[RMDB]
RNA sequence: GGGAACGACUCGAGUAGAGUCGAAAACUGUAAUUCGUUACAGAUGACGGGGUCGUUGCCAUAUGCUUUGAUCAUGGAACUACAGCUGAAGCCUCCACGGCUGCCAUGGGAGCAUUAAGCAACGACGGAGGCACCCAGCUGCGCGCUUCGGCGCGAACUUCAUGCGUGUUUUCGAACACGCAUGAAGAAAAGAAACAACAACAACAAC
Reactivity to 2A3 in 0.01 (KOAc 150mM, MgCl2 10mM, bicine 150mM(pH8.5), 24C), signal-to-noise 3, nucleotides 027 to 156: c000u010g000u020a000a040u090u090c230g050u050u040a010c010a020g050a200u130g120a150c110g020g010g000g040u040c000g010u010u000g010c000c000a040u050a010u100g000c000u300u300u070g000a010u030c010a000u000g030g060a130a170c150u200a150c270a000g010c000u020g020a030a010g000c000c000u000c010c010a040c010g010g000c000u010g030c000c000a000u000g010g000g000a020g020c000a020u010u050a080a010g000c000a000a010c030g000a000c030g000g000a000g000g020c000a020c020c000c000a060g040c070u230g010c010g000c000g000c000u000u110c240g140g000c010g000c010g010a020a040